This 207-nucleotide RNA was probed chemically with 2A3 and DMS.
RNA sequence: GGGAACGACUCGAGUAGAGUCGAAAAAUGAAUCAUAAUCCAAUAGGAUCAUAUUGAAGGUUUGGUAAAUAAUUAAAUAUUCUGAUUGCACAAAGACAGCAAUCAUUUCUGGGUCUGUUAUUAUCUCUGAUUGAGCACUCUUGCUGACAUGUGUUUAGUGGAUUAGUAAUUUCGAUUACUAAUCCACAAAAGAAACAACAACAACAAC
Reactivity to 2A3 in 0.01 (KOAc 150mM, MgCl2 10mM, bicine 150mM(pH8.5), 24C), signal-to-noise 3, nucleotides 027 to 156: a000u050g030a000a020u100c040a040u080a120a050u080c020c020a070a110u080a170g020g030a030u070c040a020u130a090u060u140g050a100a040g000g020u030u040u050g010g000u040a090a090a080u050a080a050u300u080a150a140a030u200a120u130u100c060u050g010a030u020u030g000c010a050c040a110a150a060g070a080c060a070g000c000a010a000u000c010a010u020u060u040c070u050g000g000g040u000c000u020g020u060u010a050u050u020a070u030c020u000c020u050g050a130u150u070g030a080g020c020a020c030u020c020u040u120g010c040u040g030a000c010a090u140g010u000g000u040u030u050a040
Reactivity to DMS in 0.01 (KOAc 150mM, MgCl2 10mM, bicine 150mM(pH8.5), 24C), signal-to-noise 2, nucleotides 027 to 156: a130u020g000a140a120u000c030a100u020a050a080u000c040c020a160a130u000a090g000g030a070u000c020a070u000a120u020u000g010a090a170g010g010u000u000u030g010g010u000a110a070a110u010a050a130u000u000a050a120a140u010a090u010u000c080u000g020a010u010u010g010c040a300c050a090a110a120g030a130c080a050g020c000a040a020u000c020a070u000u000u020c040u010g020g020g000u010c010u000g020u000u000a060u020u010a060u000c000u010c030u000g000a100u010u000g020a080g030c010a040c040u000c050u000u000g010c050u010g000a130c040a090u000g020u000g040u000u010u030a180
2A3 is a SHAPE reagent: it acylates the 2'-hydroxyl of flexible nucleotides of all four kinds.